RNA sequence: GGGAACGACUCGAGUAGAGUCGAAAAUUACCUCCCUUCGGGGAGGUAAACUGAACGCUGCAAGCGGCAGCGCGCUCGCUUGCGCACAGACGCACAAUAAAAGCAGUAUGCACUUCGGUGCAUACAACUCAUAUUCACGUUUCGACGUGAAUAUGAGAAAAGAAACAACAACAACAAC
Reactivity to 2A3 in 0.01 (KOAc 150mM, MgCl2 10mM, bicine 150mM(pH8.5), 24C), signal-to-noise 5, nucleotides 027 to 126: u020u010a000c000c000u000c010c000c000u020u040c240g030g000g000g010a000g000g000u000a010a000a000c010u010g030a090a010c090g000c110u210g000c030a010a010g020c000g060g000c020a060g280c070g030c050g000c110u110c060g000c010u010u020g000c010g000c000a010c010a030g090a030c050g050c080a040c060a180a170u180a190a110a020a010g020c050a030g000u010a000u010g000c000a010c000u030u060c200g100g000u000g010c000a000u000a000c000a000a000
Reactivity to DMS in 0.01 (KOAc 150mM, MgCl2 10mM, bicine 150mM(pH8.5), 24C), signal-to-noise 4, nucleotides 027 to 126: u010u010a020c000c010u000c000c000c000u010u010c220g050g010g000g000a020g010g020u010a000a010a070c030u000g000a090a080c140g030c000u010g030c000a030a030g010c010g010g000c020a150g030c210g000c230g000c000u000c030g010c030u000u010g000c000g010c030a100c040a020g010a180c110g010c090a080c200a080a070u020a050a060a080a090g030c140a130g010u020a000u000g000c000a000c000u000u020c140g040g000u000g000c000a000u000a000c000a080a090